RNA sequence: GGGAACGACUCGAGUAGAGUCGAAAAGGGGUCGAUCCCGAGGAUCGCCAGAGCUUGGAUUUAUAGUUCUGAAGCCUCCACGGAACUAUUGUCAGCUCGCGAUCCGUUUGACGGAUCGACGGAGGCACCCAAACUGUUCGCCUUCGGGCGAACAGAACUCUUGUAGUGUCUUCGGACACUACAAGAGAAAAGAAACAACAACAACAAC
Reactivity to 2A3 in 0.01 (KOAc 150mM, MgCl2 10mM, bicine 150mM(pH8.5), 24C), signal-to-noise 2, nucleotides 027 to 156: g060g020g040g000u010c010g000a000u000c000c000c010g000a040g000g000a010u020c050g070c130c200a160g020a030g010c160u300u300g150g010a150u290u300u040a020u060a000g000u000u000c010u010g020a030a010g020c010c000u000c000c010a010c030g030g000a000a000c010u010a010u020u110g110u180c120a010g020c000u000c000g000c000g000a000u020c000c000g000u100u090u110g010a000c000g000g010a000u010c000g000a000c010g000g000a000g000g000c000a030c000c000c000a000a100a110c000u000g000u000u010c000g010c000c000u080u130c300g060g030g000c020g000a000a000c000a000g000a000a020